Source information: This 177-nucleotide RNA was probed chemically with 2A3 and DMS. 2A3 adducts were read by reverse transcription with SuperScript II with manganese. The DMS profile rests on 3,105 reads.
RNA sequence: GGGAACGACUCGAGUAGAGUCGAAAAGAUAUGGAGAUAUCUGGCGUACGACGAUCUCGGAAACGAGGGAGUACCUCAGAGUAUCUCCUAAGUCAAACUUCUGCAUCGCUUCGGCGAUGCAGAAGAAGUAAACUGAUUUGUUCGCAAAUCAGUUUACAAAAGAAACAACAACAACAAC
Reactivity to 2A3 in 0.01 (KOAc 150mM, MgCl2 10mM, bicine 150mM(pH8.5), 24C), signal-to-noise 2, nucleotides 027 to 126: g030a020u080a030u200g010g000a000g010a000u000a010u000c000u010g000g000c000g030u020a010c010g240a100c020g020a160u000c000u000c000g030g000a090a100a060c020g000a010g000g030g010a030g000u020a020c020c010u010c020a010g030a040g130u050a000u010c010u010c010c000u000a060a000g030u010c030a100a050a100c000u010u000c000u000g020c000a000u000c010g030c030u090u110c300g140g000c040g020a000u010g000c000a010g000a000a000g000a000a000
Reactivity to DMS in 0.01 (KOAc 150mM, MgCl2 10mM, bicine 150mM(pH8.5), 24C), signal-to-noise 3, nucleotides 027 to 126: g000a050u000a300u020g000g000a010g020a010u000a010u000c010u000g000g000c300g010u000a010c010g020a130c240g000a030u020c000u000c000g010g000a100a100a150c010g000a030g000g000g000a050g000u000a000c000c010u000c020a020g000a040g010u000a010u000c000u000c000c000u000a010a060g000u000c020a090a140a220c000u010u000c000u000g000c040a000u000c000g010c000u010u010c210g030g010c000g000a000u000g000c000a010g000a000a000g000a030a070